[RMDB]
RNA sequence: GGGAACGACUCGAGUAGAGUCGAAAAGGGGCGGUACGCGCUCGAAAAGAUAUCGAGCGCGCCCUAUGGCUAUCUCAGCCGGGGACCCGGCGAAGAGUGCAAGAGCAAAAGAUAGCUUGACAGUGUUCUUCCCAACGAGGAACGCUGACGCGAAAGCCUACAUUGCGUUCUUCGGAACGCAAUGUAGAAAAGAAACAACAACAACAAC
Reactivity to 2A3 in 0.01 (KOAc 150mM, MgCl2 10mM, bicine 150mM(pH8.5), 24C), signal-to-noise 1, nucleotides 027 to 156: g040g000g000g010c050g000g100u300a090c070g000c010g000c030u000c000g000a050a040a030a030g280a130u280a050u120c000g010a000g030c000g040c000g010c000c000c000u020a070u040g030g000c040u020a010u060c030u050c130a010g000c020c000g000g020g000g050a100c110c010c000g020g010c060g020a170a110g050a060g030u120g000c030a130a120g020a030g110c030a020a060a030a000g030a050u010a040g000c020u060u090g130a090c000a010g010u000g000u030u000c000u020u020c030c040c050a060a050c090g020a000g010g000a000a000c010g000c030u020g010a030c040g000c020g170a070a060a000g010c010

Description:
The data come from the RNA Mapping Database (RMDB), library RSTRND. Structure probing data (2A3) for a 207-nucleotide construct. For 2A3, 638 sequencing reads were counted.